[RMDB]
RNA sequence: GGGAACGACUCGAGUAGAGUCGAAAAACGCGUGGUACGCCACGCGAGCAGGGACGCGGUCGUGCAGGAAAUUAUUUGGCAUUAGAUUCAAAUGUUAACUGUAAGACUGUGUCUUUGCGGGUGAUAAGCUUUCCCUGAUAUUCGUAUCAGGGAAAGCAAAAGAAACAACAACAACAAC
Reactivity to DMS in 0.01 (KOAc 150mM, MgCl2 10mM, bicine 150mM(pH8.5), 24C), signal-to-noise 2, nucleotides 027 to 126: a220c000g040c010g030u010g010g010u020a090c210g020c000c010a000c010g000c010g010a020g010c000a000g000g000g000a030c000g040c010g020g000u010c010g000u020g020c000a020g000g000a130a030a030u000u070a020u000u000u000g010g000c040a300u070u000a100g000a130u030u020c000a030a000a010u000g000u000u000a040a210c020u000g010u000a040a030g010a020c010u000g030u000g000u000c000u000u000u000g000c030g000g010g000u010g030a110u000a090a140
Reactivity to 2A3 in 0.01 (KOAc 150mM, MgCl2 10mM, bicine 150mM(pH8.5), 24C), signal-to-noise 5, nucleotides 027 to 126: a010c010g000c000g000u010g010g020u070a080c280g120c030c010a000c000g010c000g010a010g000c000a010g010g000g000a000c010g010c000g010g000u000c000g020u020g000c010a000g060g110a040a040a020u300u300a050u030u090u020g040g000c080a070u140u150a140g180a300u160u050c010a010a000a000u020g010u020u010a050a030c000u000g000u010a020a010g000a000c000u010g000u000g000u000c000u000u000u000g000c000g020g000g000u160g090a150u070a140a040